[RMDB]
RNA sequence: GGGAACGACUCGAGUAGAGUCGAAAAAUCCACUGUUGCAACUUUCUAUAGUUGCCAAUGACGAAAACUACGAGGGCUACGCUCUCGCUGCGUAAGCAGCUGAGCCCGCUCUCCUGGUAGCUUCGGCUCCAGCAAUCAUCAGGGGAUGCCUGUAAACCAUAGAAACGUACUUCGGUACGUUUCUAUGAAAAGAAACAACAACAACAAC
Reactivity to 2A3 in 0.01 (KOAc 150mM, MgCl2 10mM, bicine 150mM(pH8.5), 24C), signal-to-noise 4, nucleotides 027 to 156: a000u030c010c000a030c040u080g040u110u090g010c000a010a000c010u080u110u180c110u300a180u190a200g010u010u000g000c000c020a060a090u130g030a030c100g070a040a050a040a070c100u210a070c080g000a000g000g000g000c020u080a020c060g000c010u020c010u030c080g000c000u010g000c020g050u110a100a130g000c010a000g010c000u010g000a000g000c000c000c030g020c000u000c000u000c010c000u000g020g040u170a010g000c000u040u060c210g100g000c010u000c010c010a020g000c060a050a100u130c040a020u040c010a030g010g000g000g050a040u060g100c010c010u030g070u140a090a070a050c040
Reactivity to DMS in 0.01 (KOAc 150mM, MgCl2 10mM, bicine 150mM(pH8.5), 24C), signal-to-noise 1, nucleotides 027 to 156: a220u020c010c000a150c140u000g000u020u010g000c000a090a050c030u000u000u000c060u030a110u010a040g020u000u000g000c000c050a100a110u010g030a070c020g000a090a040a090a040c010u010a040c000g000a040g020g000g000c040u000a060c060g000c040u000c010u010c060g000c000u000g010c030g030u030a130a220g010c000a020g020c000u000g010a030g030c000c070c090g020c010u000c070u000c010c050u000g020g030u000a010g030c020u020u000c100g000g010c010u000c200c190a060g040c010a020a080u010c050a150u000c000a030g020g030g000g010a130u000g000c030c010u000g030u020a110a030a100c300